[RMDB]
RNA sequence: GGGAACGACUCGAGUAGAGUCGAAAAAGAUGCUGGAUAUACAGGCGUCCCAGCUACGCCGCAUGGAGUCAUCCAUCAACCACAUCUCGCAGACGGUUGACAUCCAUAAAGAGAAGGUGGCCAGGCACUAAUUUAGCGUGUUCGCACGCUAAAUUAGAAAAGAAACAACAACAACAAC
Reactivity to 2A3 in 0.01 (KOAc 150mM, MgCl2 10mM, bicine 150mM(pH8.5), 24C), signal-to-noise 1, nucleotides 027 to 126: a000g060a010u100g040c060u040g000g060a060u050a000u030a300c060a070g030g000c000g040u020c000c040c000a030g000c040u040a030c080g010c000c000g040c010a010u050g000g000a030g040u020c010a050u000c020c000a010u010c020a030a070c020c040a080c020a150u130c090u050c110g060c020a060g000a070c030g000g000u020u000g020a030c010a140u020c030c000a040u060a090a110a010g140a020g080a200a010g070g020u020g000g040c000c010a050g020g050c000a020
Reactivity to DMS in 0.01 (KOAc 150mM, MgCl2 10mM, bicine 150mM(pH8.5), 24C), signal-to-noise 3, nucleotides 027 to 126: a160g000a120u010g020c030u000g000g010a140u020a140u000a090c170a150g000g010c060g010u000c050c030c050a120g020c090u000a060c080g020c020c030g020c220a030u000g010g000a060g000u010c200a040u000c000c030a050u020c050a100a150c040c020a070c100a070u000c080u000c080g000c110a100g000a060c090g030g000u010u020g050a070c130a090u000c020c010a050u000a070a060a110g010a050g000a070a070g000g020u010g010g030c060c040a060g020g040c070a180
Structure probing data (2A3 and DMS) for a 177-nucleotide construct.
The RNA was probed in 150 mM KOAc, 10 mM MgCl2 and 150 mM bicine (pH 8.5) at 24 C.
2A3 adducts were read by reverse transcription with SuperScript II with manganese.
For 2A3, 1,450 sequencing reads were counted.
It was measured as part of the RMDB library OK2TST.
Values cover nucleotides 27 to 126.